[RMDB]
An RNA of 177 nucleotides, treated with DMS and 2A3 and read out base by base. Values cover nucleotides 27 to 126. Conditions: 150 mM KOAc, 10 mM MgCl2 and 150 mM bicine (pH 8.5), 24 C. For DMS, 2,539 sequencing reads were counted. For 2A3, 3,805 sequencing reads were counted.
RNA sequence: GGGAACGACUCGAGUAGAGUCGAAAAGAUAUGGAUCGUAAGAGGAGCAACAGCUAAUCUCGGAAACGAGAGUUAGACAUGCUCUGGUACGAUCCUAAGUCAAAACCGUUAGCUUCGGCUAACGGAAUCAUUGUUUACGCUUCGGCGUAAACAAUGAAAAAGAAACAACAACAACAAC
Reactivity to DMS in 0.01 (KOAc 150mM, MgCl2 10mM, bicine 150mM(pH8.5), 24C), signal-to-noise 3, nucleotides 027 to 126: g010a040u000a300u000g000g020a010u000c010g020u000a080a130g010a220g010g000a010g020c000a060a080c300a220g010c010u020a000a010u000c010u000c000g020g010a070a070a130c000g000a010g010a110g020u010u020a020g000a020c060a240u000g000c000u000c000u000g020g030u010a020c000g020a000u000c000c000u030a000a090g000u000c020a090a050a120a120c000c000g000u000u000a000g000c010u000u010c250g020g000c000u000a000a000c000g010g000a020a010
Reactivity to 2A3 in 0.01 (KOAc 150mM, MgCl2 10mM, bicine 150mM(pH8.5), 24C), signal-to-noise 2, nucleotides 027 to 126: g030a010u060a010u110g020g010a000u000c000g000u030a100a060g160a300g300g000a010g000c040a050a110c080a130g030c010u000a000a040u000c000u000c000g030g000a050a020a000c020g000a020g010a010g060u020u010a020g020a090c070a070u300g010c000u000c000u000g020g090u040a000c010g000a000u010c000c010u050a070a000g050u000c030a000a020a120a180c000c000g000u000u000a000g000c010u070u040c300g110g000c000u000a010a000c000g000g000a000a020